[RMDB]
RNA sequence: GGGAACGACUCGAGUAGAGUCGAAAAUGAGGAACGAUGAGCACAGCCCAUCCUAUCAACAGAUCAACUGUAUCGACAGUGUCAUCAGGUAUGAGACCGCAAGUUUGGAUACCAUGUAAGUCUGUUCCACGUGACCAGGAUUCGUCCUGGUCACGUGAAAAGAAACAACAACAACAAC
Reactivity to DMS in 0.01 (KOAc 150mM, MgCl2 10mM, bicine 150mM(pH8.5), 24C), signal-to-noise 2, nucleotides 027 to 126: u000g000a060g000g020a090a090c180g000a040u000g030a080g000c040a080c130a130g020c050c000c030a040u010c040c030u010a150u000c060a070a090c070a040g010a110u000c100a020a110c010u000g010u000a090u010c120g000a060c030a040g010u010g020u000c020a010u010c030a050g010g020u000a010u010g000a100g000a020c010c010g000c190a090a140g000u000u000u000g040g000a080u020a050c010c070a070u020g000u000a050a140g000u000c020u010g000u030u000c060
Reactivity to 2A3 in 0.01 (KOAc 150mM, MgCl2 10mM, bicine 150mM(pH8.5), 24C), signal-to-noise 2, nucleotides 027 to 126: u210g010a140g020g020a030a030c080g030a050u070g010a020g000c060a010c010a170g030c040c030c000a030u030c000c010u060a070u120c030a000a040c000a030g020a040u030c060a050a060c010u000g020u100a050u150c040g130a050c020a010g030u060g060u170c030a130u020c030a060g070g020u190a100u110g030a030g060a020c010c000g080c100a080a070g030u000u040u000g070g000a020u010a010c010c000a010u080g020u070a150a010g010u010c010u030g030u070u080c030
Annotation:
Structure probing data (DMS and 2A3) for a 177-nucleotide construct. The DMS profile rests on 1,417 reads. Conditions: 150 mM KOAc, 10 mM MgCl2 and 150 mM bicine (pH 8.5), 24 C.